[RMDB]
Structure probing data (DMS and 2A3) for a 177-nucleotide construct. For 2A3, 1,994 sequencing reads were counted.

RNA sequence: GGGAACGACUCGAGUAGAGUCGAAAAGCACAAAGCUGGAAUAACCCUGCCAGUUCUUAGAAGCUUUAAGAUUCAUCGUCUUGAACUUGAUACACAUAGUAUAGCACCUUAAAAACGAAUCAUCUGCCUCUGACUAUCACUUCGGUGAUAGUCAGAGAAAAGAAACAACAACAACAAC
Reactivity to DMS in 0.01 (KOAc 150mM, MgCl2 10mM, bicine 150mM(pH8.5), 24C), signal-to-noise 2, nucleotides 027 to 126: g030c000a170c160a170a090a030g000c000u000g040g000a070a050u070a080a110c030c040c030u030g000c000c000a020g040u000u040c040u010u130a170g000a110a080g000c110u060u020u060a030a090g020a040u000u000c260a060u060c150g000u010c020u000u000g000a120a060c090u000u000g000a040u000a050c000a070c000a100u000a070g020u000a020u010a040g000c030a070c150c110u050u010a080a080a010a020a070c060g000a000a050u010c150a120u020c000u000g050c220
Reactivity to 2A3 in 0.01 (KOAc 150mM, MgCl2 10mM, bicine 150mM(pH8.5), 24C), signal-to-noise 4, nucleotides 027 to 126: g050c040a020c060a130a140a010g010c010u000g000g060a030a040u110a070a100c020c000c000u000g000c010c000a020g000u060u000c020u020u140a090g020a140a040g020c000u050u050u040a040a000g000a040u160u180c040a040u120c180g060u010c010u020u020g040a030a060c010u000u070g020a000u050a050c040a020c030a040u130a020g090u050a050u030a070g040c000a070c030c010u070u100a090a010a050a050a020c050g040a020a080u050c010a020u000c040u050g030c020